[RMDB]
RNA sequence: GGGAACGACUCGAGUAGAGUCGAAAAGAUAUGGAAAAGGGGGACGUACAUUCUUCUUUUGACGCGAUACUAGUCGGAAACGACUAGAUCGCGAUAAGAAGAUGUACGUCCCCCUUUUCCUAAGUCAGAUGUACUCUUACUUCGGUAAGAGUACAUCAAAAGAAACAACAACAACAAC
Reactivity to DMS in 0.01 (KOAc 150mM, MgCl2 10mM, bicine 150mM(pH8.5), 24C), signal-to-noise 2, nucleotides 027 to 126: g000a050u000a300u010g000g000a040a020a010a020g020g020g020g010g010a010c020g030u010a000c000a000u000u000c020u000u000c000u000u000u000u010g040a260c120g020c000g000a010u000a140c000u000a000g010u010c000g000g010a150a130a300c010g020a020c000u000a010g000a040u000c010g020c000g020a020u020a000a010g000a050a020g000a030u000g000u000a010c000g000u000c000c020c000c000c000u000u010u010u000c000c000u000a020a110g020u000c060a120